[RMDB]
RNA sequence: GGGAACGACUCGAGUAGAGUCGAAAACAAAUUAGGUAGGGGCACAUGAUGUGUAGCAAUACAACAUCAUGCAAGAUUUGAAUCUUGAGAUUAAUAGUCACAAAAGAAGAAAUUCUUUACAGAACGCCACCAAAAAUGAAUUCGUUCAUUUUUGGUGAAAAGAAACAACAACAACAAC
Reactivity to 2A3 in 0.01 (KOAc 150mM, MgCl2 10mM, bicine 150mM(pH8.5), 24C), signal-to-noise 9, nucleotides 027 to 126: c020a010a080a050u230u130a070g050g020u040a030g020g020g030g000c040a010c000a030u000g000a000u000g000u000g000u010a000g020c030a020a060u020a030c060a170a030c000a090u010c000a000u010g010c000a020a000g010a020u130u160u270g140a150a110u000c010u010u050g010a040g010a030u060u080a070a100u120a120g070u050c030a020c020a120a080a030a010g040a020a010g040a020a050a000u040u010c000u030u070u090a060c030a020g090a070a030c040g040c030
Reactivity to DMS in 0.01 (KOAc 150mM, MgCl2 10mM, bicine 150mM(pH8.5), 24C), signal-to-noise 7, nucleotides 027 to 126: c050a070a090a080u030u030a080g000g000u000a060g010g010g010g010c150a230c010a010u000g000a000u010g020u000g000u000a020g000c300a090a110u000a010c020a040a050c000a000u000c000a010u000g010c050a030a030g010a030u000u020u010g010a110a060u000c000u000u000g000a130g000a090u020u010a070a070u020a110g000u010c020a050c140a070a040a020a010g000a020a020g010a100a050a140u000u000c000u000u000u000a080c130a090g000a110a060c160g000c220
The data come from the RNA Mapping Database (RMDB), libraries RFM100 and RFMREP. An RNA of 177 nucleotides, treated with 2A3 and DMS and read out base by base. DMS adducts were read by reverse transcription with MarathonRT. In probing experiments dimethyl sulfate is read out at A N1 and C N3, which are open when not base-paired. For 2A3 the reverse transcriptase was SuperScript II with manganese. The RNA was probed in 150 mM KOAc, 10 mM MgCl2 and 150 mM bicine (pH 8.5) at 24 C. Values cover nucleotides 27 to 126.